The record gives the reactivity of an RNA of 177 nucleotides to DMS. For DMS the reverse transcriptase was MarathonRT. The RNA was probed in 150 mM KOAc, 10 mM MgCl2 and 150 mM bicine (pH 8.5) at 24 C.
[RMDB]
RNA sequence: GGGAACGACUCGAGUAGAGUCGAAAAUCUGAAGAGUUCGCUCUUCAGAAAAUACCGAGUGUCAACCUCGGUAGAGUUGACUAACCCUUGGAAACAAGGGAAAAACGGAAUGGUUCGCCAUUCCGAACCAUUCGUGGAUGUUCGCAUCCACGAAUGGAAAAGAAACAACAACAACAAC
Reactivity to DMS in 0.01 (KOAc 150mM, MgCl2 10mM, bicine 150mM(pH8.5), 24C), signal-to-noise 1, nucleotides 027 to 126: u000c000u000g000a000a000g000a040g040u000u030c270g030c010u010c000u000u000c000a060g020a000a010a100a130u000a070c030c000g000a070g000u000g030u000c070a060a040c160c000u000c010g010g050u010a000g000a200g020u000u000g000a050c040u020a110a200c000c010c000u010u000g000g010a100a150a270c020a000a000g010g000g010a000a010a060a060a120c000g000g000a020a000u000g010g000u000u010c270g030c050c010a020u000u010c020c000g000a030a050